[RMDB]
RNA sequence: GGGAACGACUCGAGUAGAGUCGAAAAAGGGAGGAAUCCACUCGGAGUAGAACAGAGAAAUCACCUCCAGAGGACCCCUUCAGCGAACAGAGGCGCUCGCACGGGAUAGGAGUAAGACCAUAGCGAUUGAGUGAGCCCUUCGGGGCUCACAAAAGAAACAACAACAACAAC
Reactivity to 2A3 in 0.01 (KOAc 150mM, MgCl2 10mM, bicine 150mM(pH8.5), 24C), signal-to-noise 1, nucleotides 027 to 129: a000g010g000g000a000g000g000a130a110u040c030c010a110c020u100c000g040g070a040g000u100a040g080a120a070c050a000g160a000g080a060a150a020u000c000a070c050c020u000c020c000a000g000a000g000g000a010c000c040c000c000u000u000c060a150g010c050g020a010a000c000a040g090a010g000g000c000g000c030u000c040g010c070a050c000g030g000g000a010u000a140g010g000a020g020u150a040a080g000a000c000c070a050u060a030g010c010g020a030u110u050g000a050
Reactivity to DMS in 0.01 (KOAc 150mM, MgCl2 10mM, bicine 150mM(pH8.5), 24C), signal-to-noise 2, nucleotides 027 to 129: a140g040g050g000a100g080g000a140a150u030c040c000a230c030u030c160g000g000a100g050u030a140g080a120a190c090a090g110a050g040a180a040a110u000c060a120c080c030u060c030c000a010g000a000g020g020a030c130c010c010c000u000u080c000a090g040c000g040a060a100c170a010g000a080g010g010c080g020c040u060c100g010c190a010c120g000g000g000a090u020a110g000g020a100g020u010a030a100g010a080c020c000a040u030a110g070c050g040a080u000u060g010a120